[RMDB]
RNA sequence: GGGAACGACUCGAGUAGAGUCGAAAACAGAGGCCGGCAUGAUGCUUGGGCAGCCGGUGAUAGCAAUGAACCAAGGCGGCGAGGCCCAGCUUGUCAUGGCGCUACGUGCGAUAGCCGAUGACAUUGACCAUAUGAUGAGCUUCGGCUCAUCAUAUGGAAAAGAAACAACAACAACAAC
Reactivity to 2A3 in 0.01 (KOAc 150mM, MgCl2 10mM, bicine 150mM(pH8.5), 24C), signal-to-noise 3, nucleotides 027 to 126: c030a010g110a040g060g090c010c030g040g020c030a060u120g040a030u090g000c070u150u150g000g010g050c010a020g060c000c020g030g040u050g040a110u170a020g020c050a090a300u210g020a030a050c000c020a010a000g080g040c040g020g000c040g010a060g040g030c020c030c010a030g000c000u020u080g000u020c020a040u040g010g060c070g020c010u040a010c050g180u180g060c020g030a070u070a030g020c040c050g060a060u060g020a030c030a070u020u120g120a100
Reactivity to DMS in 0.01 (KOAc 150mM, MgCl2 10mM, bicine 150mM(pH8.5), 24C), signal-to-noise 3, nucleotides 027 to 126: c080a110g040a170g000g020c020c010g000g010c010a070u010g020a070u000g010c030u010u010g010g010g040c010a110g000c030c010g020g020u000g010a080u000a100g000c080a110a130u010g010a110a060c020c030a090a160g030g010c050g000g000c050g000a120g020g010c010c000c020a090g020c050u000u000g000u000c000a020u000g000g010c130g000c010u000a010c120g000u010g020c070g000a150u000a080g010c000c020g000a050u010g010a050c050a080u000u000g010a300
This 177-nucleotide RNA was probed chemically with 2A3 and DMS.
For 2A3 the reverse transcriptase was SuperScript II with manganese.
It was measured as part of the RMDB library OK2TRN.
The RNA was probed in 150 mM KOAc, 10 mM MgCl2 and 150 mM bicine (pH 8.5) at 24 C.
The 2A3 profile rests on 2,281 reads.